This 177-nucleotide RNA was probed chemically with DMS and 2A3. The reactions ran in a buffer of 150 mM KOAc, 10 mM MgCl2 and 150 mM bicine (pH 8.5), at 24 C. It was measured as part of the RMDB library M2PK50.
RNA sequence: GGGAACGACUCGAGUAGAGUCGAAAAACGUACCUAUUCGUAGGUACGUGAUUAAAAGCAAGUCAUAUAAAAGGAAGACUAGCAAUAUAGAAUCCUAUAUUAAUAGCACAUGUUUCGACAUGUGCAAACCGUAGGAUAGUUUCGACUAUCCUACGGUAAAAGAAACAACAACAACAAC
Reactivity to DMS in 0.01 (KOAc 150mM, MgCl2 10mM, bicine 150mM(pH8.5), 24C), signal-to-noise 3, nucleotides 027 to 126: a010c000g010u010a000c000c000u000a030u000u000c160g030u010a010g010g000u010a010c000g010u000g010a090u010u010a040a070a140a120g020c010a090a020g000u000c020a100u000a250u010a050a070a130a050g000g000a130a120g000a020c010u000a100g020c010a050a070u000a090u000a030g000a130a110u000c040c010u000a050u010a060u000u010a110a110u010a110g000c000a010c000a000u000g000u000u000u010c190g010a030c000a000u000g000u000g010c000a030a020
Reactivity to 2A3 in 0.01 (KOAc 150mM, MgCl2 10mM, bicine 150mM(pH8.5), 24C), signal-to-noise 5, nucleotides 027 to 126: a000c000g000u000a000c000c000u000a020u020u070c260g060u020a000g000g000u000a000c000g000u000g000a010u000u140a050a080a030a000g010c020a020a020g000u000c050a030u160a020u090a300a210a050a010g150g030a100a140g010a010c000u000a020g010c000a030a040u130a010u020a090g120a080a040u030c010c020u040a050u020a020u280u180a120a200u080a150g000c000a000c000a010u010g020u010u100u060c130g080a020c000a000u000g000u000g010c000a020a000